RNA sequence: GGGAACGACUCGAGUAGAGUCGAAAAAUAGGUAGCGCACCUCCAGAUUGACACUUCCAAACUUAUGGGCUUGAUUUGAGAACCUCUCAGAACUUGCUGGUAUGCAGGUUAAAGCUGUUUGGUGCUGCAAGAUAGCACUGUUCGCAGUGCUAUCUUGAAAAGAAACAACAACAACAAC
Reactivity to DMS in 0.01 (KOAc 150mM, MgCl2 10mM, bicine 150mM(pH8.5), 24C), signal-to-noise 6, nucleotides 027 to 126: a100u010a080g010g020u010a080g010c080g010c050a050c030c000u010c130c020a070g000a100u000u010g010a110c160a060c100u000u010c100c020a060a090a080c100u010u010a070u010g030g010g010c020u000u000g010a090u000u010u000g000a050g010a090a160c210c190u010c020u000c010a040g000a030a030c010u000u000g010c000u000g020g030u000a060u010g010c090a030g000g000u000u000a050a040a050g000c020u000g000u000u000u000g010g020u000g000c050u000g010
Reactivity to 2A3 in 0.01 (KOAc 150mM, MgCl2 10mM, bicine 150mM(pH8.5), 24C), signal-to-noise 4, nucleotides 027 to 126: a010u200a060g040g040u090a050g040c030g020c040a010c000c000u000c010c000a000g040a090u040u060g030a020c030a050c090u140u020c030c010a100a120a090c100u180u140a080u230g060g030g000c000u030u040g050a080u100u020u040g040a060g040a170a140c020c020u060c030u000c010a010g030a060a030c000u010u020g010c000u090g090g090u120a040u130g030c040a010g040g000u020u080a090a060a020g020c000u020g040u130u050u030g010g000u030g010c030u050g060

The record gives the reactivity of an RNA of 177 nucleotides to DMS and 2A3. For DMS, 7,251 sequencing reads were counted. For 2A3 the reverse transcriptase was SuperScript II with manganese.